[RMDB]
RNA sequence: GGGAACGACUCGAGUAGAGUCGAAAACACGAAGGUUGGCUAAUCCUGGUCGGACAUCAGGGGGUUAGUGCAAUGGCAUAAGCCACCUUGGCGCUAAUAGAUACUAAUCGUAGCAUAGCUGAAUAAAAUCCGUGAGCUAUUUCGAUAGCUCACGGAUAAAAGAAACAACAACAACAAC
Reactivity to 2A3 in 0.01 (KOAc 150mM, MgCl2 10mM, bicine 150mM(pH8.5), 24C), signal-to-noise 3, nucleotides 027 to 126: c110a030c080g050a080a000g010g040u100u070g030g000c030u010a000a060u030c000c000u000g010g000u020c020g030g060a000c000a140u100c070a020g000g000g000g000g070u040u100a010g030u040g000c010a030a160u140g100g000c000a070u080a210a000g010c000c000a030c020c020u030u070g020g000c000g010c000u030a040a050u060a140g070a010u080a060c010u120a090a110u110c040g050u060a000g000c020a060u040a050g010c010u020g130a150a030u180a110a170a020
Reactivity to DMS in 0.01 (KOAc 150mM, MgCl2 10mM, bicine 150mM(pH8.5), 24C), signal-to-noise 2, nucleotides 027 to 126: c080a180c170g000a150a170g000g030u000u000g000g000c000u070a100a070u030c050c010u000g000g020u000c080g020g000a250c180a080u050c000a050g000g000g000g000g000u000u000a050g050u030g030c060a140a070u050g010g050c000a090u010a170a140g000c020c050a020c110c070u000u030g050g020c020g000c000u000a010a100u030a050g040a050u000a040c110u000a030a140u000c020g040u000a040g020c040a100u020a130g000c050u000g020a110a070u010a000a110a030
Conditions: 150 mM KOAc, 10 mM MgCl2 and 150 mM bicine (pH 8.5), 24 C.
Chemical mapping of a 177-nucleotide RNA with 2A3 and DMS.
Values cover nucleotides 27 to 126.
DMS adducts were read by reverse transcription with MarathonRT.
It was measured as part of the RMDB library OK1LIB.